[RMDB]
RNA sequence: GGGAACGACUCGAGUAGAGUCGAAAAUAGGAAACUUUGGUGAGUCGAGCCAUUUUGCACACCAACACGUUUGCCUUUCAGCGUCGCUUGAUCCGCCACUUUGCCCGCCAGAGAAACGAAGGCGGCACUAAUCGUAGUCCUUCGGGACUACGAUUAGAAAAGAAACAACAACAACAAC
Reactivity to 2A3 in 0.01 (KOAc 150mM, MgCl2 10mM, bicine 150mM(pH8.5), 24C), signal-to-noise 2, nucleotides 027 to 126: u180a010g010g010a060a040a070c050u070u030u040g000g060u080g010a050g020u070c080g020a040g040c070c050a190u150u080u050u140g000c020a040c010a030c040c030a030a000c070a010c060g030u100u090u150g090c010c000u070u030u100c020a060g050c020g120u100c050g040c080u030u040g020a020u020c020c010g010c000c020a060c000u010u070u110g000c020c020c000g000c030c010a050g060a010g080a140a160a060c060g040a070a080g030g000c000g010g000c000a000
Reactivity to DMS in 0.01 (KOAc 150mM, MgCl2 10mM, bicine 150mM(pH8.5), 24C), signal-to-noise 2, nucleotides 027 to 126: u000a110g010g020a100a010a000c020u010u020u000g000g010u010g000a070g040u000c100g030a080g000c110c150a120u000u010u010u000g000c110a190c000a050c030c010a030a050c300a040c180g000u010u000u000g020c010c020u000u000u020c160a110g000c070g010u000c070g000c040u000u000g000a050u000c030c020g030c030c030a040c120u000u000u000g000c080c060c030g010c040c040a090g010a140g010a100a060a120c100g020a100a150g020g020c020g000g000c120a090